[RMDB]
Chemical mapping of a 177-nucleotide RNA with DMS. DMS adducts were read by reverse transcription with MarathonRT. For DMS, 1,187 sequencing reads were counted.

RNA sequence: GGGAACGACUCGAGUAGAGUCGAAAAAAGGCAGAAGGCGCCGAAGAAGUCACAGCUUCAGAUGGAAGCGGCCAAGUCCAUUGUUAACAAGGGAGUGAGCAGCGGCCUGCCCGUGGUCAAACUCAAGACAGGGAUAGGGAUUCGUCCCUAUCCCUGUAAAAGAAACAACAACAACAAC
Reactivity to DMS in 0.01 (KOAc 150mM, MgCl2 10mM, bicine 150mM(pH8.5), 24C), signal-to-noise 2, nucleotides 027 to 126: a080a040g020g000c000a060g040a180a150g010g000c080g000c020c020g010a140a080g010a060a060g000u000c150a120c160a200g010c000u000u000c010a080g000a110u000g000g000a050a030g000c010g010g020c060c020a050a110g010u020c020c040a070u020u000g010u000u000a060a110c080a080a060g000g030g000a040g020u000g000a070g000c060a080g000c100g000g020c050c000u000g000c040c010c000g000u000g010g000u000c010a070a080a110c070u020c050a080a150g000